Chemical mapping of a 207-nucleotide RNA with 2A3. Conditions: 150 mM KOAc, 10 mM MgCl2 and 150 mM bicine (pH 8.5), 24 C. Source: RMDB library M2RFPK, as collected in RNAgym.
RNA sequence: GGGAACGACUCGAGUAGAGUCGAAAAGAAAGAAAGAAGCGAGCUGGCGCAGCCGCACGGGCAACCGUCAAUCCAGCACUUCACAAGUCUUGUCGUUCUGACAGGACAUCCAUCUACCCACCGGGAAAAAAGGACUACAGCUUCGGCUGUAGUCCAACACUAAUUGGUCCUUCGGGACCAAUUAGUGAAAAGAAACAACAACAACAAC
Reactivity to 2A3 in 0.01 (KOAc 150mM, MgCl2 10mM, bicine 150mM(pH8.5), 24C), signal-to-noise 1, nucleotides 027 to 156: g000a000a030a000g020a000a130a000g020a010a000g010c020g070a030g020c010u010g030g010c150g000c090a050g140c070c130g060c030a000c010g000g030g000c110a080a050c030c000g030u030c030a010a040u030c000c020a010g000c030a050c000u050u040c010a050c030a170a130g010u010c000u010u000g020u000c010g130u300u140c150u250g010a000c010a000g010g000a000c000a000u030c000c030a060u000c030u060a100c000c000c000a030c080c070g100g040g000a160a050a020a000a000a000g030g000a020c000u000a000c010a000g000c000u040u080c130g100g000c000u000g000u000a000g000u010c000c000a000a000